The record gives the reactivity of an RNA of 177 nucleotides to DMS and 2A3. It was measured as part of the RMDB library RFMREP. For 2A3, 1,924 sequencing reads were counted. In probing experiments dimethyl sulfate is read out at A N1 and C N3, which are open when not base-paired. DMS adducts were read by reverse transcription with MarathonRT. Reactivities are given for positions 27 through 126. The RNA was probed in 150 mM KOAc, 10 mM MgCl2 and 150 mM bicine (pH 8.5) at 24 C.
[RMDB]
RNA sequence: GGGAACGACUCGAGUAGAGUCGAAAAGCCUGCAGUGCUGGCAGCCUCUUUGGGCACCAGACAUGAAAUUCAACAGCAACCGCCAGUAGAUUAAACCAAUUGAACGUCUGAAGCUGUGGUGCCGGCAGAGAAAUAGUAGGUUCGCCUACUAUUUCUCAAAAGAAACAACAACAACAAC
Reactivity to DMS in 0.01 (KOAc 150mM, MgCl2 10mM, bicine 150mM(pH8.5), 24C), signal-to-noise 2, nucleotides 027 to 126: g000c070c000u000g010c120a170g010u000g030c010u010g000g020c070a080g000c000c000u010c260u000u010u010g010g010g020c000a170c030c000a020g010a080c030a020u010g000a140a090a080u000u000c080a070a070c040a080g000c040a050a120c170c200g000c030c020a040g020u000a100g000a030u000u000a040a080a170c090c120a050a080u000u000g010a070a180c080g010u000c030u000g030a080a090g010c040u000g030u000g000g030u000g000c020c010g010g040c100a120
Reactivity to 2A3 in 0.01 (KOAc 150mM, MgCl2 10mM, bicine 150mM(pH8.5), 24C), signal-to-noise 2, nucleotides 027 to 126: g020c010c000u030g040c060a060g060u020g070c000u010g020g000c050a090g030c020c020u100c070u100u110u220g010g000g000c010a020c000c020a020g030a070c010a010u070g060a090a060a050u140u070c060a030a010c010a020g020c000a050a070c020c040g030c010c010a010g040u030a010g040a030u080u120a150a090a080c040c030a050a050u040u090g020a110a020c050g020u010c030u030g030a030a000g000c020u000g000u030g070g030u020g010c010c030g030g000c040a030